[RMDB]
RNA sequence: GGGAACGACUCGAGUAGAGUCGAAAACUUCGUCUGCCACAUCGCUUUGUCAUCUCGGCUGUCGCAAGCACCCGAAUGAUCAGCCUUUUUACUAGAGACUGGCAGUCGAUGCGACGUGCGCGCCGGGGCGCGUCUGUGAUUUCGAUCACAGACGCGCAAAAGAAACAACAACAACAAC
Reactivity to 2A3 in 0.01 (KOAc 150mM, MgCl2 10mM, bicine 150mM(pH8.5), 24C), signal-to-noise 3, nucleotides 027 to 126: c010u060u030c010g010u000c030u060g010c010c010a070c000a100u060c040g030c060u100u090u160g040u050c020a060u010c020u010c050g030g000c020u050g070u120c020g020c130a050a020g050c020a060c000c060c000g030a030a050u070g030a180u070c020a010g010c000c000u060u120u090u090u020a150c130u080a020g030a010g020a110c020u010g010g000c000a010g020u010c000g010a010u050g010c010g070a090c040g080u070g000c030g020c000g020c050c000g050g010g030
Reactivity to DMS in 0.01 (KOAc 150mM, MgCl2 10mM, bicine 150mM(pH8.5), 24C), signal-to-noise 3, nucleotides 027 to 126: c050u010u000c030g000u000c030u000g020c030c020a090c130a050u000c130g010c060u000u010u010g000u000c090a050u000c060u000c020g000g000c100u020g030u010c030g010c100a090a220g000c020a030c160c060c010g030a030a040u000g010a070u000c240a060g010c000c020u000u010u010u000u050a130c190u000a070g000a040g010a020c120u000g010g010c040a050g020u000c000g000a050u000g020c010g010a060c120g030u000g020c060g010c080g010c040c000g000g010g010